Overview: This 207-nucleotide RNA was probed chemically with 2A3 and DMS. For 2A3 the reverse transcriptase was SuperScript II with manganese. The 2A3 profile rests on 10,490 reads. Source: RMDB library RNAMAK, as collected in RNAgym. Reactivities are given for positions 27 through 156. Conditions: 150 mM KOAc, 10 mM MgCl2 and 150 mM bicine (pH 8.5), 24 C.
[RMDB]
RNA sequence: GGGAACGACUCGAGUAGAGUCGAAAACAUUGAUUCGUCAAUGAUUGUGCGUACUACUCCUUUUGACGUCGACUCACUCGAAGAACAUUCCCAAAUAGGAAUGGGAGAGUGAGAGAACGACGAUAAGGAGUAUCGCGAUGUCCUCCUUCGGGAGGAAGAAUGCUUUAACAUUCGUGUUAAAGCAUUCAAAAGAAACAACAACAACAAC
Reactivity to 2A3 in 0.01 (KOAc 150mM, MgCl2 10mM, bicine 150mM(pH8.5), 24C), signal-to-noise 8, nucleotides 027 to 156: c000a010u000u010g010a020u100u110c220g080u030c120a020a010u050g070a240u120u260g120u150g070c030g030u090a110c060u010a000c000u040c010c010u020u090u060u130g260a140c020g000u020c000g070a180c010u000c000a010c000u000c000g060a150a040g000a020a000c000a010u010u010c000c000c000a040a120a040u170a030g000g010a010a010u000g020g010g010a020g010a000g010u010g000a010g000a010g070a140a030c000g010a000c000g010a010u010a030a000g000g000a000g010u000a000u040c000g000c010g020a030u180g070u020c010c010u000c010c000u040u100c220g150g000g000a000g000g000a000a020
Reactivity to DMS in 0.01 (KOAc 150mM, MgCl2 10mM, bicine 150mM(pH8.5), 24C), signal-to-noise 5, nucleotides 027 to 156: c010a030u000u010g010a070u000u000c300g020u000c010a020a020u010g010a150u000u000g020u010g020c020g010u000a150c110u000a030c000u010c000c010u000u000u000u000g020a180c070g000u000c000g030a300c010u010c000a020c000u000c010g010a140a170g010a120a170c010a020u000u000c000c000c000a010a120a140u000a050g000g000a030a010u000g010g000g010a250g000a050g020u010g000a030g000a080g010a100a160c020g010a050c000g030a070u000a040a010g040g010a040g010u000a000u000c030g020c030g000a150u010g010u000c010c000u000c010c000u000u010c300g030g020g020a010g040g030a010a020